[RMDB]
RNA sequence: GGGAACGACUCGAGUAGAGUCGAAAAAUCGACCGAUCAUGAACCUUCGUGGUGAAAGAUUUGAGUUUGAGCACAUAUGUUGGUACCCGAAAGAUGGUGAACUAUGCCUGAGUAGGGUGAAGCCAGGUAUCACAAAGCGUUUCGACGCUUUGUGAUAAAAAGAAACAACAACAACAAC
Reactivity to DMS in 0.01 (KOAc 150mM, MgCl2 10mM, bicine 150mM(pH8.5), 24C), signal-to-noise 4, nucleotides 027 to 126: a070u000c020g020a040c000c010g000a020u010c010a020u000g030a300a030c020c020u000u030c160g020u050g010g020u000g000a170a080a150g000a030u010u010u040g010a090g010u000u000u040g000a050g010c110a080c150a060u050a060u010g030u000u000g000g010u000a020c010c000c000g000a170a130a100g020a100u030g010g040u000g010a120a090c230u040a110u050g000c000c000u000g000a120g010u030a120g000g000g000u000g000a090a090g010c000c020a030g020g040
Reactivity to 2A3 in 0.01 (KOAc 150mM, MgCl2 10mM, bicine 150mM(pH8.5), 24C), signal-to-noise 2, nucleotides 027 to 126: a000u010c040g030a000c000c000g000a000u000c020a010u090g120a000a050c000c060u130u150c300g170u300g170g000u030g090a050a010a040g000a100u010u130u300g070a160g060u030u110u300g010a000g130c090a030c060a150u230a020u180g080u130u200g040g000u100a030c000c000c000g030a040a010a000g150a090u200g010g010u010g060a110a060c050u150a200u300g000c000c020u000g000a000g090u060a000g000g000g000u080g010a050a000g000c000c010a010g020g030
Conditions: 150 mM KOAc, 10 mM MgCl2 and 150 mM bicine (pH 8.5), 24 C. The record gives the reactivity of an RNA of 177 nucleotides to DMS and 2A3.